[RMDB]
RNA sequence: GGGAACGACUCGAGUAGAGUCGAAAAGAUAUGGACUCCGGAGAGCGAAGAACAUGCUCGCUCGGAAACGAGCGAGGCAUGGGAGCUUUAAGGAGUCCUAAGUCAAACGUCGCCUUCGGGCGACGAAUCAUAUUAGUCUGUUCGCAGACUAAUAUGAAAAAGAAACAACAACAACAAC
Reactivity to DMS in 0.01 (KOAc 150mM, MgCl2 10mM, bicine 150mM(pH8.5), 24C), signal-to-noise 5, nucleotides 027 to 126: g000a040u000a300u000g000g020a010c010u000c000c000g000g020a240g000a010g010c010g000a150a220g010a170a220c000a000u000g000c010u000c000g020c000u000c000g000g000a080a090a170c000g000a010g010c000g020a030g030g000c000a000u000g000g000g000a120g030c000u000u000u000a300a270g010g000a010g020u000c000c000u000a000a070g010u000c040a140a120a250c020g020u000c000g010c000c000u010u020c290g030g010g030c000g010a000c000g010a050a070
Reactivity to 2A3 in 0.01 (KOAc 150mM, MgCl2 10mM, bicine 150mM(pH8.5), 24C), signal-to-noise 2, nucleotides 027 to 126: g000a000u050a050u130g000g020a000c000u000c000c000g040g030a080g000a010g060c020g160a300a100g020a150a050c000a000u020g000c000u000c020g010c000u000c000g020g020a050a050a020c000g000a000g000c020g030a060g170g020c010a000u010g000g020g020a050g000c010u050u040u030a020a000g000g000a000g000u000c000c000u000a010a000g010u000c010a010a000a060c000g000u010c010g010c010c000u080u070c280g140g010g000c070g000a000c000g000a000a030
Structure probing data (DMS and 2A3) for a 177-nucleotide construct. For DMS, 6,578 sequencing reads were counted. DMS adducts were read by reverse transcription with MarathonRT. The reactions ran in a buffer of 150 mM KOAc, 10 mM MgCl2 and 150 mM bicine (pH 8.5), at 24 C.